[RMDB]
RNA sequence: GGGAACGACUCGAGUAGAGUCGAAAACUGCGCGUGUGGCAGGAGGGUCGGUGAUGGUCCGGAUCUCUUGUAUUUAGAGAUGGGUUUUCCUGGGUUAGGAUGGUCGUGGAUACUUUGGGGGCGCGUGCGAUAUAUAUAUAUUCGUAUAUAUAUAUCGAAAAGAAACAACAACAACAAC
Reactivity to 2A3 in 0.01 (KOAc 150mM, MgCl2 10mM, bicine 150mM(pH8.5), 24C), signal-to-noise 2, nucleotides 027 to 126: c020u010g000c040g000c010g020u070g030u060g040g000c020a020g000g020a010g010g010g010u040c010g020g010u030g020a110u090g010g020u010c000c000g020g070a030u000c020u000c000u020u030g050u090a130u080u250u070a010g000a010g010a020u030g020g030g000u040u030u020u020c000c000u030g070g020g000u070u160a040g000g040a020u010g030g000u020c010g020u020g030g030a020u030a100c010u010u020u050g030g010g010g010g000c010g000c010g000u020g010
Reactivity to DMS in 0.01 (KOAc 150mM, MgCl2 10mM, bicine 150mM(pH8.5), 24C), signal-to-noise 3, nucleotides 027 to 126: c050u010g000c030g010c050g030u010g020u010g010g020c050a080g020g000a090g000g010g010u010c050g010g010u010g000a080u020g000g000u010c010c030g010g010a040u000c000u000c000u000u000g010u040a050u040u040u020a020g010a030g010a030u010g010g010g020u010u020u010u010c030c020u010g010g000g010u000u020a090g010g000a090u010g010g000u010c060g010u000g000g000a110u020a040c080u000u010u020g010g010g010g000g020c010g020c020g010u010g010
Notes
An RNA of 177 nucleotides, treated with 2A3 and DMS and read out base by base. DMS (dimethyl sulfate) methylates the pairing face of unpaired adenines and cytosines. For 2A3, 1,976 sequencing reads were counted. The DMS profile rests on 11,260 reads. It was measured as part of the RMDB library OK1LIB. Reactivities are rounded to 0.1 and cut off at 0 and 3. Values cover nucleotides 27 to 126.